RNA sequence: GGGAACGACUCGAGUAGAGUCGAAAAUUUGAUCAGGGAGAUUUUGAUCUUUAUAAAAUGGAAGGAAAAAAGUGAUUGUUCUACUUUCUUGAUGGUAGAAGAUGCUUUUAAAGAAUUAGGAACAGAGAUGCUAUAAUUACUUCGGUAAUUAUAGCAUAAAAGAAACAACAACAACAAC
Reactivity to DMS in 0.01 (KOAc 150mM, MgCl2 10mM, bicine 150mM(pH8.5), 24C), signal-to-noise 5, nucleotides 027 to 126: u010u030u020g010a030u000c020a030g000g020g010a130g010a080u040u030u010u010g000a040u010c010u020u010u030a090u040a100a070a090a090u020g000g010a090a100g010g000a000a070a030a020a020a020g000u000g000a050u010u000g000u000u000c000u000a050c060u000u030u040c120u030u020g010a060u030g000g020u000a000g000a040a070g000a050u000g000c000u000u000u000u010a040a090a100g010a040a050u010u010a080g010g010a030a050c060a050g000a130g000
Reactivity to 2A3 in 0.01 (KOAc 150mM, MgCl2 10mM, bicine 150mM(pH8.5), 24C), signal-to-noise 7, nucleotides 027 to 126: u080u060u190g010a030u030c030a040g040g160g070a130g170a120u270u100u030u060g010a010u030c000u000u180u030a290u080a070a120a060a040u140g070g030a020a050g060g000a070a140a000a000a020a020g030u100g230a110u040u080g120u140u020c010u000a040c040u040u120u190c050u090u190g170a150u200g020g010u010a000g000a040a010g030a010u020g000c000u020u030u040u110a080a130a000g070a020a030u120u090a110g040g040a030a020c020a030g060a010g010